[RMDB]
RNA sequence: GGGAACGACUCGAGUAGAGUCGAAAAGCGAUGGAAGCCCUCAACAUUCAGGACCUGGUGGACUGCGACGUGGCGAGAUACGUGUGCAUGAGCAUGGAACAUGCACCAACCACUGGCCGCAUUCAUACGUGCGUAAUUACUUCGGUAAUUACGCACGAAAAGAAACAACAACAACAAC
Reactivity to DMS in 0.01 (KOAc 150mM, MgCl2 10mM, bicine 150mM(pH8.5), 24C), signal-to-noise 2, nucleotides 027 to 126: g000c090g030a040u030g010g000a140a100g030c030c000c000u010c070a090a160c080a110u010u000c060a040g010g030a110c060c020u020g010g050u000g000g000a100c090u000g000c030g060a080c090g020u000g050g020c020g000a040g000a100u000a100c160g010u020g020u000g000c000a000u000g000a080g020c110a150u020g010g010a100a150c010a000u000g000c000a020c020c020a120a080c070c080a030c070u010g010g010c040c010g030c080a040u010u000c100a060u000a190
Reactivity to 2A3 in 0.01 (KOAc 150mM, MgCl2 10mM, bicine 150mM(pH8.5), 24C), signal-to-noise 2, nucleotides 027 to 126: g030c020g070a050u100g050g040a060a050g020c010c000c000u020c010a080a130c030a060u060u140c030a040g110g000a080c030c000u090g010g000u070g000g080a040c030u040g010c030g040a050c030g040u020g000g000c070g040a050g020a060u140a110c070g040u130g020u000g110c020a000u000g010a020g110c080a090u150g040g100a010a020c000a010u010g000c000a010c000c010a020a030c050c000a040c070u010g070g010c000c000g060c030a020u070u060c020a050u060a180
Source: RMDB library OK2TST, as collected in RNAgym. The record gives the reactivity of an RNA of 177 nucleotides to DMS and 2A3. For DMS, 1,544 sequencing reads were counted. In probing experiments dimethyl sulfate is read out at A N1 and C N3, which are open when not base-paired. The RNA was probed in 150 mM KOAc, 10 mM MgCl2 and 150 mM bicine (pH 8.5) at 24 C.